[RMDB]
RNA sequence: GGGAACGACUCGAGUAGAGUCGAAAAGGCUCCCACUUCGGUGGGAGCCAAAGCUGAACGCGCAGCAAGCGUUAAACAUGGAAAAACGCACCUCCAAUGCGCAAAGCUUCCCCUUCGGGGGAAGCAACUCUAGAAUAGAGUUCGCUCUAUUCUAGAGAAAAGAAACAACAACAACAAC
Reactivity to 2A3 in 0.01 (KOAc 150mM, MgCl2 10mM, bicine 150mM(pH8.5), 24C), signal-to-noise 3, nucleotides 027 to 126: g000g010c000u020c000c010c000a010c010u040u070c230g070g020u000g000g000g000a000g000c000c010a010a000a000g000c000u020g040a080a010c060g000c010g000c010a010g030c040a100a060g000c000g010u020u050a100a300a010c070a210u280g110g060a140a110a020a010a000c010g000c010a050c000c030u070c020c020a040a070u090g000c010g000c000a030a050a060g010c000u000u000c000c000c000c000u000u130c230g080g000g000g000g000a000a000g000c000a000a010
Reactivity to DMS in 0.01 (KOAc 150mM, MgCl2 10mM, bicine 150mM(pH8.5), 24C), signal-to-noise 3, nucleotides 027 to 126: g020g020c010u000c000c000c000a010c000u000u010c140g040g040u010g050g000g020a010g020c000c000a020a000a100g010c060u000g010a090a120c120g030c010g020c030a050g020c090a120a130g010c000g010u000u000a060a060a140c110a190u000g020g000a070a090a040a070a010c020g020c000a140c120c070u000c020c030a060a100u000g010c010g010c100a060a110a150g000c000u000u000c000c000c000c000u000u010c150g000g000g010g000g000a000a000g000c000a010a020